[RMDB]
RNA sequence: GGGAACGACUCGAGUAGAGUCGAAAAGAUAUGGAUCCCAAUGGACAUGAUCCUUCGGAAACGAAAUGGAUCAACAGCCAUGGGAUCCUAAGUCAAACUUAUCGCUCACUUCGGUGAGCGAUAAGAACAUGUAACAACGCUUCGGCGUUGUUACAUGAAAAGAAACAACAACAACAAC
Reactivity to 2A3 in 0.01 (KOAc 150mM, MgCl2 10mM, bicine 150mM(pH8.5), 24C), signal-to-noise 2, nucleotides 027 to 126: g020a020u040a040u060g000g000a000u010c000c000c060a040a240u070g000g030a100c080a300u070g000a010u000c000c020u000u010c000g040g010a030a010a040c020g000a000a080a140u190g000g030a000u030c010a030a110c110a050g040c020c000a000u030g000g010g000a000u000c000c000u010a020a010g000u020c040a030a040a110c010u000u000a000u010c000g000c000u000c000a020c010u050u070c300g160g000u000g010a000g010c010g000a010u010a000a000g000a010a000
Reactivity to DMS in 0.01 (KOAc 150mM, MgCl2 10mM, bicine 150mM(pH8.5), 24C), signal-to-noise 3, nucleotides 027 to 126: g020a040u010a230u020g010g010a000u000c000c000c010a030a050u000g020g000a060c130a170u000g010a010u000c000c010u010u000c000g030g000a050a060a100c010g020a010a010a130u010g020g000a000u000c000a050a110c270a170g000c010c020a010u000g000g000g000a000u000c000c000u000a010a050g010u010c050a100a090a190c000u000u000a010u000c000g010c000u000c000a000c000u000u020c180g020g020u000g000a010g000c010g000a000u000a000a000g000a080a200